[RMDB]
RNA sequence: GGGAACGACUCGAGUAGAGUCGAAAAGAACCGGAGGGUCGCCCUCGGCGCCGCUUGGGCCAGUGUUUCGGGGCCGGCCCUGACAAGCAGCCCGAGGAGGGCCUCGAACGACUCAAACCUGGACUUCCUAUUACUAGCUGUUCGCAGCUAGUAAUAGAAAAGAAACAACAACAACAAC
Reactivity to 2A3 in 0.01 (KOAc 150mM, MgCl2 10mM, bicine 150mM(pH8.5), 24C), signal-to-noise 7, nucleotides 027 to 126: g040a040a040c070c050g060g060a090g010g020g100u030c050g300c060c010c010u000c000g030g000c140g010c020c010g000c020u030u060g010g010g000c030c010a080g010u070g160u170u130u230c140g040g010g090g010c020c010g020g000c010c000c000u020g030a030c000a010a010g010c010a000g000c000c000c000g000a010g010g010a090g010g010g000c000c000u000c010g010a050a020c010g050a030c010u040c040a070a120a120c010c020u050g030g010a040c010u040u030c010
Reactivity to DMS in 0.01 (KOAc 150mM, MgCl2 10mM, bicine 150mM(pH8.5), 24C), signal-to-noise 2, nucleotides 027 to 126: g000a080a130c090c050g000g000a130g000g010g010u010c000g000c110c000c000u000c020g010g000c220g030c020c030g020c010u000u000g020g020g020c000c010a090g000u010g010u000u020u030c070g000g020g000g010c020c060g030g030c000c020c020u020g000a080c130a070a030g010c010a090g040c020c000c010g000a020g000g010a120g000g000g000c000c000u000c030g000a100a130c080g000a070c010u000c020a000a120a130c040c000u010g000g000a220c130u000u000c080

An RNA of 177 nucleotides, treated with 2A3 and DMS and read out base by base. The RNA was probed in 150 mM KOAc, 10 mM MgCl2 and 150 mM bicine (pH 8.5) at 24 C. DMS adducts were read by reverse transcription with MarathonRT. Source: RMDB libraries RFM100 and RFMREP, as collected in RNAgym.